[RMDB]
An RNA of 207 nucleotides, treated with DMS and 2A3 and read out base by base. DMS adducts were read by reverse transcription with MarathonRT.

RNA sequence: GGGAACGACUCGAGUAGAGUCGAAAAACCGGCGGUAAAUCAACUCAGUUGAAAGCCGCGAGUGCUUUGGGUGCGAACUCAAAGGACAGCAGAUCCGGUGUAAUUCCGGGGCCGACGGUUAGAGUCCAAAAGAGGUUAUCGUUCGCGAUAACCUCAAGUACAUACGAUGGUUCGCCAUCGUAUGUACAAAAGAAACAACAACAACAAC
Reactivity to DMS in 0.01 (KOAc 150mM, MgCl2 10mM, bicine 150mM(pH8.5), 24C), signal-to-noise 1, nucleotides 027 to 156: a040c000c000g030g000c000g030g040u010a010a080a160u000c030a080a040c010u020c040a200g000u000u000g010a030a120a230g010c030c010g010c010g000a060g030u010g020c000u030u000u000g020g000g000u000g010c300g010a300a040c010u000c020a000a030a060g020g030a000c010a210g000c010a130g000a200u000c000c010g030g060u000g000u000a120a300u000u020c000c000g000g000g010g000c110c000g030a040c010g020g040u000u020a150g030a240g020u000c050c030a080a020a080a260g010a030g010g020u000u000a020u000c000g010u000u020c130g020c080g030a000u000a010a000c000c010u000c010a000a080
Reactivity to 2A3 in 0.01 (KOAc 150mM, MgCl2 10mM, bicine 150mM(pH8.5), 24C), signal-to-noise 2, nucleotides 027 to 156: a010c010c000g020g000c010g000g000u050a110a090a160u030c020a020a020c030u110c300a140g020u040u010g070a110a100a030g100c050c040g000c040g020a060g020u010g090c000u000u000u000g000g020g010u020g040c040g080a050a010c000u010c010a000a010a000g020g070a000c010a000g000c000a030g010a120u030c010c000g000g000u030g020u030a030a050u130u040c010c000g000g000g000g030c000c000g010a020c010g000g010u010u000a050g040a020g170u100c020c010a020a040a000a100g000a000g020g000u000u000a000u020c010g020u040u130c300g000c010g120a000u000a000a030c000c000u000c000a000a000
The 2A3 profile rests on 1,213 reads. The reactions ran in a buffer of 150 mM KOAc, 10 mM MgCl2 and 150 mM bicine (pH 8.5), at 24 C.